[RMDB]
RNA sequence: GGGAACGACUCGAGUAGAGUCGAAAACGGGCUCUCCAGGGUAACUUUGGAGCCCCAGCACUCUGUGGAAUAUGGUUCGCAGAACACUUGCAUCCUGCUGUUGGGAUGCCCCCAAACUAUAAUAGCAGCAUGCUCAGUCUUUCACCAGAAAGAACCAGACGUCCAAAAUAUUCGUAUUUUGGACGUCAAAAGAAACAACAACAACAAC
Reactivity to 2A3 in 0.01 (KOAc 150mM, MgCl2 10mM, bicine 150mM(pH8.5), 24C), signal-to-noise 1, nucleotides 027 to 156: c010g000g000g020c010u060c010u040c080c030a040g040g040g070u210a140a160c090u160u100u140g000g010a000g000c000c000c000c000a030g060c030a050c030u030c030u040g000u030g080g050a100a030u110a140u260g100g010u020u000c020g030c040a040g030a050a060c060a000c070u050u110g010c000a010u010c010c010u020g020c060u050g050u000u070g000g000g020a050u080g010c000c010c000c020c020a080a180a010c130u150a070u080a300a180u180a110g000c000a000g010c000a000u050g000c010u030c120a020g030u060c040u030u080u030c120a140c110c000a060g090a040a130a010g000a050a050c060c040a030
Structure probing data (2A3) for a 207-nucleotide construct. For 2A3, 590 sequencing reads were counted. Conditions: 150 mM KOAc, 10 mM MgCl2 and 150 mM bicine (pH 8.5), 24 C. 2A3 adducts were read by reverse transcription with SuperScript II with manganese. It was measured as part of the RMDB library OK3TST. Reactivities are given for positions 27 through 156.